[RMDB]
This 177-nucleotide RNA was probed chemically with DMS and 2A3.
RNA sequence: GGGAACGACUCGAGUAGAGUCGAAAAUAAACUUCUUGAGGAGCGCCUUUUUGUUGGAUUUGUCCUUUAUUCAUUAAGCAAAUUUCAUCACUAAUAGACAUUGCUUCUUCUUGGUCGUGUGUAACAACGAAACCUAAUAGUUCGCUAUUAGGUUUCGAAAAGAAACAACAACAACAAC
Reactivity to DMS in 0.01 (KOAc 150mM, MgCl2 10mM, bicine 150mM(pH8.5), 24C), signal-to-noise 4, nucleotides 027 to 126: u000a120a110a110c040u000u000c020u000u000g000a070g000g010a080g040c140g020c050c000u000u000u000u000u010g010u010u000g020g000a040u000u000u000g000u010c130c050u000u000u010a090u010u010c180a110u010u000a040a050g000c010a010a010a020u000u000u000c010a020u010c030a050c150u010a030a060u000a050g020a030c070a130u000u010g010c020u000u000c010u000u000c050u000u000g010g020u000c060g000u020g020u010g010u010a080a090c170a040a160
Reactivity to 2A3 in 0.01 (KOAc 150mM, MgCl2 10mM, bicine 150mM(pH8.5), 24C), signal-to-noise 1, nucleotides 027 to 126: u070a000a040a000c000u030u020c000u030u030g010a000g020g030a020g020c020g020c010c020u030u050u030u060u100g020u040u020g020g020a040u040u020u040g050u230c040c000u140u130u060a170u030u180c150a090u100u030a020a010g020c000a000a040a050u100u090u190c000a040u000c020a020c020u060a020a140u040a070g020a020c050a140u010u170g000c000u010u040c000u010u000c000u060u020g000g000u020c020g030u070g050u000g000u120a050a000c020a000a010
DMS (dimethyl sulfate) methylates the pairing face of unpaired adenines and cytosines.